[RMDB]
RNA sequence: GGGAACGACUCGAGUAGAGUCGAAAACAACGUAUUAGUUAUAGAUUUUGGCACAGCUACAACCUAUAACUACGUUGAUAAAAGCGGAGCAAUUACUUGCGGACUUAUUUGCACGGGAAUUAGUGCGGAGUCACUAUAAUUUCGAUUAUAGUGACUCAAAAGAAACAACAACAACAAC
Reactivity to DMS in 0.01 (KOAc 150mM, MgCl2 10mM, bicine 150mM(pH8.5), 24C), signal-to-noise 9, nucleotides 027 to 126: c010a010a000c000g010u010a080u000u000a040g020u000u000a000u000a000g000a030u000u000u000u000g010g010c010a200c200a150g010c010u000a020c110a010a010c040c000u000a000u000a010a010c000u000a020c010g010u000u000g000a120u010a060a070a060a080g020c060g000g010a230g010c030a040a050u000u010a100c180u000u000g010c020g000g000a130c090u000u000a070u000u000u010g010c020a020c040g010g000g010a090a110u010u000a110g020u000g000c040g010
Reactivity to 2A3 in 0.01 (KOAc 150mM, MgCl2 10mM, bicine 150mM(pH8.5), 24C), signal-to-noise 9, nucleotides 027 to 126: c000a000a000c000g040u060a110u230u110a170g000u010u000a010u010a010g020a040u010u030u030u060g030g000c040a080c060a300g000c050u040a010c020a020a010c000c000u000a000u000a010a000c000u000a000c000g000u000u010g030a050u150a060a150a010a000g060c060g090g040a080g030c030a040a100u150u060a160c090u060u060g090c020g020g020a040c020u100u120a080u170u180u180g000c010a010c010g050g020g160a170a240u170u110a150g020u010g020c030g040
Structure probing data (DMS and 2A3) for a 177-nucleotide construct. The RNA was probed in 150 mM KOAc, 10 mM MgCl2 and 150 mM bicine (pH 8.5) at 24 C. Values cover nucleotides 27 to 126. The data come from the RNA Mapping Database (RMDB), library OK2TST.